[RMDB]
RNA sequence: GGGAACGACUCGAGUAGAGUCGAAAAUUCUGGAUUACUUAGUUAUGGCCUUUGCAAAGGCAGGGGUAUUUGUUUUGAUGCAAACCUCAAUCCCUCCCCUUCUUUGAAUGGUGUGCCCCACCCCGCGUAUCAAGCAUUAAUUCGUUAAUGCUUGAUAAAAAGAAACAACAACAACAAC
Reactivity to DMS in 0.01 (KOAc 150mM, MgCl2 10mM, bicine 150mM(pH8.5), 24C), signal-to-noise 8, nucleotides 027 to 126: u010u010c030u000g010g010a120u030u030a060c080u010u020a070g000u010u020a070u030g010g000c010c010u000u010u020g010c140a070a070a060g010g020c080a070g010g000g010g020u010a050u020u000u000g010u000u000u020u020g010a090u020g010c040a020a040a060c060c020u000c030a090a090u010c030c020c030u000c020c000c000c030u000u000c020u000u010u010g010a070a070u010g000g010u010g010u010g000c020c010c000c030a180c070c020c010c030g010c160g020
Reactivity to 2A3 in 0.01 (KOAc 150mM, MgCl2 10mM, bicine 150mM(pH8.5), 24C), signal-to-noise 9, nucleotides 027 to 126: u050u020c020u050g060g020a060u080u070a130c060u090u110a070g090u100u110a130u200g090g010c000c010u040u050u140g080c100a110a060a030g050g000c020a030g030g010g000g000u060a180u050u050u020g070u030u050u090u130g130a090u210g010c030a020a020a030c000c000u010c000a020a060u030c000c000c010u030c000c000c000c000u040u040c010u040u060u070g070a080a050u100g010g020u040g030u050g050c010c000c010c000a040c010c000c000c010g050c010g000